[RMDB]
RNA sequence: GGGAACGACUCGAGUAGAGUCGAAAAGCAAGGAAAAGCUUUGAGAAUAGGUUUCACUGAGAAAGGACAGGUAGCAAUACCUGACAUUGUAGCCACAGAAGCAGCUUUUCUCUGCUUCACAUAUGGGUAUCCUUAGGAACUUCGGUUCCUAAGGAUAAAAAGAAACAACAACAACAAC
Reactivity to 2A3 in 0.01 (KOAc 150mM, MgCl2 10mM, bicine 150mM(pH8.5), 24C), signal-to-noise 3, nucleotides 027 to 126: g030c020a030a040g030g040a050a030a010a010g000c020u100u120u160g100a140g030a120a120u140a140g010g000u030u050u070c030a030c030u100g070a080g140a220a100a030g120g050a020c000a010g000g000u000a010g020c040a040a020u010a000c000c010u010g010a000c000a010u060u060g030u030a000g020c020c000a090c000a120g070a120a020g050c010a000g000c000u050u020u050u000c010u000c000u010g020c000u050u080c040a050c020a030u300a140u130g120g010g060
Reactivity to DMS in 0.01 (KOAc 150mM, MgCl2 10mM, bicine 150mM(pH8.5), 24C), signal-to-noise 6, nucleotides 027 to 126: g020c020a040a050g010g010a040a040a030a040g020c020u000u000u010g030a110g020a120a140u010a080g030g010u000u000u000c040a070c080u010g000a140g010a080a100a120g020g000a180c020a010g010g010u000a000g000c290a080a120u000a010c000c000u010g010a080c060a060u000u000g010u000a040g010c020c010a090c180a130g010a100a070g010c070a020g010c080u000u000u000u000c020u000c020u000g000c000u000u000c050a040c130a070u000a050u010g010g010g010